[RMDB]
RNA sequence: GGGAACGACUCGAGUAGAGUCGAAAAUUAAAGCACGCGAAGCACGCGAAGCACAUGAAGCACAUGAAGCACUACAAGCAGUACAAGCACGGCAUGCAGUAGAAGCAGUACAAGCAGCCGAAAAAAACUUAAUAUAUGACUUCGGUCAUAUAUUAAGAAAAGAAACAACAACAACAAC
Reactivity to DMS in 0.01 (KOAc 150mM, MgCl2 10mM, bicine 150mM(pH8.5), 24C), signal-to-noise 3, nucleotides 027 to 126: u000u020a070a120a110g010c060a090c100g020c050g000a090a090g020c130a080c090g030c080g000a050a070g010c020a060c100a040u020g010a060a050g000c050a030c080a030u010g000a090a070g020c030a080c050u000a050c130a030a090g010c050a070g000u000a040c160a050a070g010c050a070c080g010g010c040a030u000g010c020a090g000u000a030g000a080a090g020c060a040g020u000a030c090a060a070g020c090a020g000c010c050g000a010a000a060a030a040a060a130
Reactivity to 2A3 in 0.01 (KOAc 150mM, MgCl2 10mM, bicine 150mM(pH8.5), 24C), signal-to-noise 2, nucleotides 027 to 126: u070u030a120a000a000g010c030a000c050g040c000g090a040a000g120c030a020c050g020c030g040a040a010g020c020a040c020a100u020g030a110a000g050c050a040c010a070u050g080a070a000g020c030a010c060u110a010c020a060a030g050c020a010g030u070a040c010a040a080g020c030a020c080g010g000c030a040u080g010c020a020g000u060a010g030a070a000g010c040a010g040u060a050c030a120a000g000c000a000g030c010c000g090a160a000a000a000a000a000a000
This 177-nucleotide RNA was probed chemically with DMS and 2A3.
The RNA was probed in 150 mM KOAc, 10 mM MgCl2 and 150 mM bicine (pH 8.5) at 24 C.
Values cover nucleotides 27 to 126.
The DMS profile rests on 1,877 reads.
For 2A3, 2,235 sequencing reads were counted.
For DMS the reverse transcriptase was MarathonRT.